This 207-nucleotide RNA was probed chemically with 2A3.
Values cover nucleotides 27 to 156.
The RNA was probed in 150 mM KOAc, 10 mM MgCl2 and 150 mM bicine (pH 8.5) at 24 C.
RNA sequence: GGGAACGACUCGAGUAGAGUCGAAAAAUGCUAAGUGCCUGGUCUAAUAUCCCUAGGCAGGAAGUGACAGAGAAGUAUCCAGAUUCUGCCUCUUGGAGGCUCAACUCCAGGAUCCAAGCACUUAACCAUGUCACACAUUGCUGCUCACAUCAAGGGAAUGACGUCAGGUAUUCGUACCUGACGUCAUAAAAGAAACAACAACAACAAC
Reactivity to 2A3 in 0.01 (KOAc 150mM, MgCl2 10mM, bicine 150mM(pH8.5), 24C), signal-to-noise 1, nucleotides 027 to 156: a000u130g010c020u030a020a000g000u000g000c000c020u090g060g000u070c040u050a100a030u020a060u130c000c000c000u060a070g000g000c020a020g040g020a050a120g020u030g070a000c000a040g180a050g080a160a060g080u180a070u050c040c030a010g000a060u120u000c000u010g040c000c000u030c000u010u030g010g060a020g000g050c120u060c150a120a090c040u000c000c000a000g000g010a020u050c000c010a010a000g010c030a010c020u080u000a020a000c040c000a080u050g000u030c010a000c020a000c010a090u130u130g000c010u000g050c020u050c030a040c030a090u080c000a180a060g090g000g000a000